Overview
The data come from the RNA Mapping Database (RMDB), library RNAMAK. This 207-nucleotide RNA was probed chemically with DMS and 2A3. The reactions ran in a buffer of 150 mM KOAc, 10 mM MgCl2 and 150 mM bicine (pH 8.5), at 24 C. For 2A3 the reverse transcriptase was SuperScript II with manganese.

[RMDB]
RNA sequence: GGGAACGACUCGAGUAGAGUCGAAAACGCUCGCCUUCGGGCGAGCGAAAAAUCCUAAGUCGUGAGGAGCUUGACAUGACGAUGUCGGAAACGACAUACGUCAACAGCAAGCUCUACCCACCACGAUAUGGAAAAAAGUCGGUGUUCGCACCGACAACAUACUUACGUGGUUCGCCACGUAAGUAUGAAAAGAAACAACAACAACAAC
Reactivity to DMS in 0.01 (KOAc 150mM, MgCl2 10mM, bicine 150mM(pH8.5), 24C), signal-to-noise 1, nucleotides 027 to 156: c000g060c000u020c000g060c030c000u000u000c240g000g070g020c010g000a000g150c000g000a000a070a020a140a130u000c020c000u020a050a280g000u000c000g010u000g000a300g000g020a000g000c000u000u000g000a130c050a300u020g000a030c020g010a050u000g000u000c000g020g000a120a100a180c020g030a010c000a010u000a080c040g000u000c010a030a090c020a180g010c000a060a020g000c030u000c010u020a000c000c000c010a300c080c000a020c010g020a110u030a260u020g030g000a000a050a030a050a090a180g020u000c000g020g010u000g000u020u050c080g000c000a020c000c000g000a050c000a010a110
Reactivity to 2A3 in 0.01 (KOAc 150mM, MgCl2 10mM, bicine 150mM(pH8.5), 24C), signal-to-noise 2, nucleotides 027 to 156: c000g000c010u000c010g040c000c000u030u050c070g040g030g030c000g000a030g000c010g000a000a010a000a010a000u050c010c000u070a170a020g020u010c000g000u000g020a020g000g000a000g010c000u020u020g030a130c010a140u040g000a000c000g000a000u000g000u010c010g020g080a090a060a080c040g000a000c000a010u180a210c000g000u000c010a020a020c030a000g010c000a000a000g010c000u010c000u010a000c000c020c020a050c020c010a000c000g000a020u020a120u180g070g030a100a100a030a070a030a020g000u000c000g000g000u000g010u080u110c300g030c130a000c000c000g010a000c000a000a010